Annotation: An RNA of 207 nucleotides, treated with 2A3 and read out base by base. Source: RMDB library OK3TST, as collected in RNAgym. The RNA was probed in 150 mM KOAc, 10 mM MgCl2 and 150 mM bicine (pH 8.5) at 24 C.
RNA sequence: GGGAACGACUCGAGUAGAGUCGAAAAAUAGUCGCCCUUGUACAUUGCAUCGAACAUUGCAAGGCGGCGAGUGAUUGCCGCGUCGGGAACCUUUUCAAACUCAGGAUAUUCAGCUCGGAAAUCUUCUAAUUUCAUAUAUGCCUCCAUAUAAAAAAGGCCUAUCCUCCUCUUUCGAGAGGAGGAUAGGAAAAGAAACAACAACAACAAC
Reactivity to 2A3 in 0.01 (KOAc 150mM, MgCl2 10mM, bicine 150mM(pH8.5), 24C), signal-to-noise 2, nucleotides 027 to 156: a000u100a010g010u010c040g030c010c000c010u010u020g080u060a070c040a130u040u130g020c040a100u100c060g080a120a070c020a080u080u020g020c020a040a020g000g010c010g000g030c010g010a040g060u070g010a040u030u090g000c030c020g030c020g020u070c040g030g000g060a040a040c000c010u160u190u120u090c060a030a010a220c110u110c200a010g000g020a030u010a150u190u060c010a010g040c040u030c030g010g060a080a020a040u010c000u130u000c020u180a110a170u140u160u120c040a010u060a040u040a020u300g040c000c000u010c020c050a040u140a000u120a110a070a000a080a000a000g050g000